[RMDB]
RNA sequence: GGGAACGACUCGAGUAGAGUCGAAAACGGUGAGGUGCUCACGGAGCCUACGAGGAUCUACGUGAGACCCGUCCUGGAGGUGCUGGAGGAACGACCGGGUGUGAUCCACGGUAUGGCGCACAUCACCCGAUACGACAAAAUUCGUUUUGUCGUAUCGAAAAGAAACAACAACAACAAC
Reactivity to DMS in 0.01 (KOAc 150mM, MgCl2 10mM, bicine 150mM(pH8.5), 24C), signal-to-noise 9, nucleotides 027 to 126: c140g010g010u000g010a090g020g020u010g010c010u010c030a040c030g000g010a090g010c020c010u000a100c190g020a130g020g010a060u010c020u010a100c030g010u000g010a040g000a060c030c010c030g000u000c020c020u000g000g000a110g000g020u000g000c040u000g010g010a300g000g000a090a060c090g000a070c070c030g000g000g010u000g010u010g000a080u010c020c010a110c070g020g000u000a150u010g020g000c070g000c030a030c050a060u000c040a090c040c040
Reactivity to 2A3 in 0.01 (KOAc 150mM, MgCl2 10mM, bicine 150mM(pH8.5), 24C), signal-to-noise 9, nucleotides 027 to 126: c040g010g020u070g030a110g050g030u150g120c010u010c030a030c030g050g020a010g010c000c010u080a110c180g070a210g060g010a060u070c020u050a030c020g040u030g030a030g020a010c000c000c000g030u010c000c020u060g070g050a070g020g040u070g020c040u060g030g060a100g020g060a190a030c030g030a030c030c000g020g000g000u070g040u080g050a060u050c010c020a060c080g000g020u130a130u150g030g000c020g000c010a010c000a030u030c010a030c000c010
Structure probing data (DMS and 2A3) for a 177-nucleotide construct. 2A3 adducts were read by reverse transcription with SuperScript II with manganese. In probing experiments dimethyl sulfate is read out at A N1 and C N3, which are open when not base-paired. Conditions: 150 mM KOAc, 10 mM MgCl2 and 150 mM bicine (pH 8.5), 24 C.